[RMDB]
RNA sequence: GGGAACGACUCGAGUAGAGUCGAAAAAUGAUACAUAUUAAACAUGCCUUCUAUUCACUGUGCCAUCUUACAUCCGUAGGUGAUCAGAGGGGAAAAGAAGAGCUAGAGCAACUCCCACACUCAUGAGCUUCUUGUAAGAGUUCGCUCUUACAAGAAGAAAAGAAACAACAACAACAAC
Reactivity to DMS in 0.01 (KOAc 150mM, MgCl2 10mM, bicine 150mM(pH8.5), 24C), signal-to-noise 3, nucleotides 027 to 126: a060u000g010a140u020a110c110a090u000a080u030u000a070a070a110c180a080u010g000c010c020u000u000c010u010a190u000u000c000a040c020u000g000u010g000c270c020a030u010c000u000u010a020c030a140u000c190c170g020u000a060g000g030u000g000a090u000c030a050g000a050g000g010g020g000a020a010a120a050g000a040a020g000a090g020c000u000a040g000a080g010c120a100a080c110u000c000c010c010a090c200a070c120u000c030a100u000g020a140g010
Reactivity to 2A3 in 0.01 (KOAc 150mM, MgCl2 10mM, bicine 150mM(pH8.5), 24C), signal-to-noise 3, nucleotides 027 to 126: a000u090g020a010u110a180c040a040u300a110u140u250a100a150a030c030a050u120g000c010c010u000u010c020u020a080u020u040c010a020c030u050g010u020g200c010c000a020u040c040u090u110a020c020a080u100c080c120g030u040a010g000g020u020g010a030u070c010a000g050a050g090g080g000g020a000a070a000a000g010a020a000g040a030g000c030u060a010g010a000g050c030a020a070c050u000c020c010c000a010c010a010c000u080c020a110u100g070a020g040